Conditions: 150 mM KOAc, 10 mM MgCl2 and 150 mM bicine (pH 8.5), 24 C. This 177-nucleotide RNA was probed chemically with 2A3. 2A3 adducts were read by reverse transcription with SuperScript II with manganese. The 2A3 profile rests on 437 reads.
RNA sequence: GGGAACGACUCGAGUAGAGUCGAAAACUUGAAAUGAGGCAGCAGAAAAAUAGGCGGACCAAACGGAUCUUUUCCAGCGUUUCUCUUUGUUUCAUUCGUGAUCCAUAAUCUCUGGAAAGAUCAAAUCCCGACUAUGGCGAUUCGUCGCCAUAGUCGGAAAAGAAACAACAACAACAAC
Reactivity to 2A3 in 0.01 (KOAc 150mM, MgCl2 10mM, bicine 150mM(pH8.5), 24C), signal-to-noise 1, nucleotides 027 to 126: c020u070u210g110a080a000a020u090g030a080g170g010c010a030g000c010a010g170a000a230a030a090a110u110a140g070g000c030g050g000a030c070c030a090a040a000c050g000g000a030u050c000u050u030u120u080c020c000a020g020c010g050u000u040u000c150u010c040u030u000u190g010u020u080u000c020a000u060u080c060g080u030g040a020u040c000c020a020u070a180a100u040c060u020c010u020g020g020a020a020a000g000a000u050c010a000a080a000u070c030